[RMDB]
RNA sequence: GGGAACGACUCGAGUAGAGUCGAAAAGGCGCCAUGUCAAAACGUGUUGAAAUCGGCAUCGAAGGUGGCCGCAGACAAGCAAUCAAUGUGUCAAUCCACGCCACAUAGGUCACUAACCCCGAUAGCAUCUCUGCACGAUAUUCGUAUCGUGCAGAGAAAAAGAAACAACAACAACAAC
Reactivity to DMS in 0.01 (KOAc 150mM, MgCl2 10mM, bicine 150mM(pH8.5), 24C), signal-to-noise 2, nucleotides 027 to 126: g020g040c110g010c000c010a060u000g020u010c050a040a040a060a130c300g000u000g000u020u030g000a100a120a050u000c040g000g000c010a060u030c160g020a030a270g080g030u000g010g010c010c020g020c090a130g000a080c060a030a130g030c190a130a110u000c160a110a090u000g040u000g040u000c050a220a010u010c010c120a200c130g010c060c020a030c020a170u000a130g040g000u000c020a000c020u020a030a300c090c020c010c010g020a020u020a130g000c050a200
Reactivity to 2A3 in 0.01 (KOAc 150mM, MgCl2 10mM, bicine 150mM(pH8.5), 24C), signal-to-noise 3, nucleotides 027 to 126: g060g030c020g020c030c030a130u140g070u120c070a000a040a000a040c060g080u050g100u080u090g040a080a100a130u110c020g000g000c010a020u060c070g020a080a070g040g020u040g080g000c000c000g030c010a010g010a050c070a170a030g050c120a030a090u100c000a030a080u110g040u010g000u060c010a000a020u040c080c000a040c090g000c000c030a000c000a020u060a020g000g000u010c000a000c000u020a100a190c010c030c000c010g040a060u060a040g040c010a070